[RMDB]
RNA sequence: GGGAACGACUCGAGUAGAGUCGAAAAAAAAAGAUAUGGAGACAUUGGAGCUAUAGCAGACGAAUUACAUUCGGAAACGAAUGUAACUAUCUGCAGGUAGCUAUGAAGAUGUCUCCUAAGUCAAAAACAAUAUGUGUAUGUUCGCAUACACAUAUUGAAAAGAAACAACAACAACAAC
Reactivity to DMS in 0.01 (KOAc 150mM, MgCl2 10mM, bicine 150mM(pH8.5), 24C), signal-to-noise 5, nucleotides 027 to 126: a070a070a070a100a070g010a040u000a300u000g000g000a000g000a020c000a000u000u000g020g000a010g010c000u000a020u000a080g030c010a010g000a020c100g010a040a070u000u000a000c000a010u000u010c010g010g010a130a090a150c000g000a020a010u000g000u000a000a000c100u000a180u000c000u000g000c000a070g010g020u000a000g010c000u000a110u010g010a120a140g000a010u000g010u000c000u000c000c000u000a000a060g010u020c020a070a070a100a070a160
Reactivity to 2A3 in 0.01 (KOAc 150mM, MgCl2 10mM, bicine 150mM(pH8.5), 24C), signal-to-noise 2, nucleotides 027 to 126: a020a010a010a010a020g070a050u140a070u160g000g000a000g010a010c000a000u010u020g010g030a020g000c010u020a020u040a030g000c000a020g030a040c050g140a300a230u040u020a000c000a000u000u010c020g070g010a060a100a050c020g000a000a010u010g010u000a000a000c010u040a010u000c010u010g040c010a030g300g000u000a010g000c000u140a300u060g000a010a020g010a000u010g010u010c000u000c000c000u000a030a020g010u030c020a010a030a020a020a180
Notes:
An RNA of 177 nucleotides, treated with DMS and 2A3 and read out base by base. Conditions: 150 mM KOAc, 10 mM MgCl2 and 150 mM bicine (pH 8.5), 24 C. It was measured as part of the RMDB library TTRDES. The DMS profile rests on 8,267 reads.